Overview
This 177-nucleotide RNA was probed chemically with DMS and 2A3. It was measured as part of the RMDB library TTRDEL. For 2A3 the reverse transcriptase was SuperScript II with manganese. For 2A3, 15,802 sequencing reads were counted. For DMS, 13,543 sequencing reads were counted. Values cover nucleotides 27 to 126.
RNA sequence: GGGAACGACUCGAGUAGAGUCGAAAAGAUAUGGACCAGGGACAUGCCUUUAAUCGGAAACGAUUGGAAGGCAACAGCCCUGUCCUAAGUCAAAAGACUUAAGCAGCGUUCGCGCUGCUUAAGUCAAGUAUUCUAAUGUGUUCGCACAUUAGAAUACAAAAGAAACAACAACAACAAC
Reactivity to DMS in 0.01 (KOAc 150mM, MgCl2 10mM, bicine 150mM(pH8.5), 24C), signal-to-noise 8, nucleotides 027 to 126: g010a030u000a300u000g000g010a020c250c120a020g010g010g010a040c080a170u000g000c000c000u000u000u000a020a010u010c000g000g000a120a080a170c010g010a010u000u010g020g030a000a010g000g010c000a010a020c270a160g000c000c000c000u000g000u010c000c000u000a040a090g000u000c040a090a060a110a130g000a010c000u000u000a000a010g000c000a000g010c000g020u000u010c220g010c010g020c000u000g000c000u000u000a000a000g000u000c010a010a040
Reactivity to 2A3 in 0.01 (KOAc 150mM, MgCl2 10mM, bicine 150mM(pH8.5), 24C), signal-to-noise 3, nucleotides 027 to 126: g020a010u060a030u110g010g010a020c090c150a020g010g000g010a050c100a180u080g000c000c000u010u010u010a020a010u010c010g030g010a100a060a040c020g000a010u010u030g190g030a020a020g010g000c010a010a000c000a000g020c000c000c000u000g000u000c000c000u020a090a020g060u030c040a010a040a070a160g010a000c000u000u000a010a000g000c000a000g000c020g050u110u180c250g020c000g000c110u000g000c000u000u000a000a000g000u000c000a000a000